[RMDB]
RNA sequence: GGGAACGACUCGAGUAGAGUCGAAAAGAGCAGUAAGUACGCAUUGAUCCCUAGGUCUCCGAAUGGGGAAACCCAGCUGUUACUAGCAGUUAUUCAUGAGUGAAUACAUAGCUCAUGUAAAGGUAACGCAGAGAACUGAAACAUCUAAGUACCUGCAGGCGUUACACUAGUUCGCUAGUGUAACGCCAAAAGAAACAACAACAACAAC
Reactivity to 2A3 in 0.01 (KOAc 150mM, MgCl2 10mM, bicine 150mM(pH8.5), 24C), signal-to-noise 1, nucleotides 027 to 156: g060a000g030c050a040g010u230a270a030g000u000a020c040g030c260a050u130u150g000a120u260c000c000c030u030a040g050g000u090c050u000c060c110g180a170a050u050g000g000g000g000a000a050a050c000c000c040a040g000c040u070g000u030u010a060c070u040a010g110c050a070g030u220u100a080u110u060c040a000u000g000a000g010u090g020a000a000u100a070c040a070u080a020g000c000u010c000a010u000g030u060a050a010a070g020g000u000a040a010c010g000c040a000g000a000g000a050a020c000u000g000a030a100a000c020a010u050c010u130a100a010g000u000a000c020c000u000g000c010a110